[RMDB]
RNA sequence: GGGAACGACUCGAGUAGAGUCGAAAAUCGCAAACAAAAAAGAAGGAAGACGGAGCAGCACAGUCAUCCCUUUGUGAAAAAGGCAUUCAGGAUCUGCAGAGGUGCAAGGCAGGGUGCACCUCUGCCUGGACUGAGCUGGAAAUGCAGCCGUGUGGCACCCCAUUACCUACUUCGGUAGGUAAUGGGGAAAAGAAACAACAACAACAAC
Reactivity to 2A3 in 0.01 (KOAc 150mM, MgCl2 10mM, bicine 150mM(pH8.5), 24C), signal-to-noise 1, nucleotides 027 to 156: u110c030g010c070a010a020a130c040a080a150a050a040a010a010g130a020a020g020g000a010a070g040a030c030g010g020a030g000c010a000g000c000a040c010a030g010u040c010a100u090c000c000c050u020u030u070g070u080g180a020a050a020a020a020g010g010c020a070u060u030c010a050g000g140a120u070c030u140g000c000a000g000a000g020g000u040g000c050a020a020g130g000c050a050g160g030g020u010g000c000a020c000c000u000c000u000g010c000c000u070g000g000a000c000u010g010a000g010c000u000g000g020a030a190a000u060g000c000a000g020c020c080g040u160g020u090g060g030c030a030
An RNA of 207 nucleotides, treated with 2A3 and read out base by base. The data come from the RNA Mapping Database (RMDB), library OK3TST. The RNA was probed in 150 mM KOAc, 10 mM MgCl2 and 150 mM bicine (pH 8.5) at 24 C.